Overview: An RNA of 207 nucleotides, treated with 2A3 and DMS and read out base by base. For 2A3 the reverse transcriptase was SuperScript II with manganese. For DMS the reverse transcriptase was MarathonRT.
RNA sequence: GGGAACGACUCGAGUAGAGUCGAAAAAAUCGUCGACGCAUCGACGACCGUCCUGCCAUGAGACCGUAACGAGGACAUGUCGCCUCGAAUGGCGUCGGGGAGCCGGCAGCUUACCCCAAGGAUGAGCAAAAGAAUGAAACGUUCGCGUUUCAUUCAACGUAUCAUAACAGUUCGCUGUUAUGAUACGAAAAGAAACAACAACAACAAC
Reactivity to 2A3 in 0.01 (KOAc 150mM, MgCl2 10mM, bicine 150mM(pH8.5), 24C), signal-to-noise 8, nucleotides 027 to 156: a000a000u070c050g040u010c000g030a060c070g040c170a190u090c020g000a010c000g000a010c020c000g030u020c000c000u020g050c030c010a100u140g040a050g060a180c050c050g060u090a070a070c060g010a020g010g010a040c050a100u230g070u130c090g010c030c020u000c010g040a050a050u070g050g020c000g030u060c030g000g020g000g010a020g030c040c010g100g030c040a030g010c030u050u120a180c010c000c000c020a010a050g070g010a040u090g020a020g040c050a050a060a020a110g010a010a000u000g000a000a000a000c010g020u040u070c240g010c010g090u000u010u000c000a000u000u000c000a000a000
Reactivity to DMS in 0.01 (KOAc 150mM, MgCl2 10mM, bicine 150mM(pH8.5), 24C), signal-to-noise 3, nucleotides 027 to 156: a050a050u000c020g000u000c030g000a110c190g020c150a120u000c010g020a000c000g030a020c040c120g020u000c010c000u010g030c050c030a070u000g000a160g020a100c040c070g020u010a100a120c060g010a050g030g000a070c040a090u000g000u000c100g010c000c010u020c000g000a140a060u000g000g050c010g040u000c040g000g010g000g000a090g030c030c000g010g000c070a150g000c020u000u000a080c010c010c020c070a110a190g010g010a050u000g010a150g020c030a090a090a080a120g000a040a030u020g010a030a010a020c000g030u010u000c240g060c060g010u000u000u000c000a040u000u000c000a040a170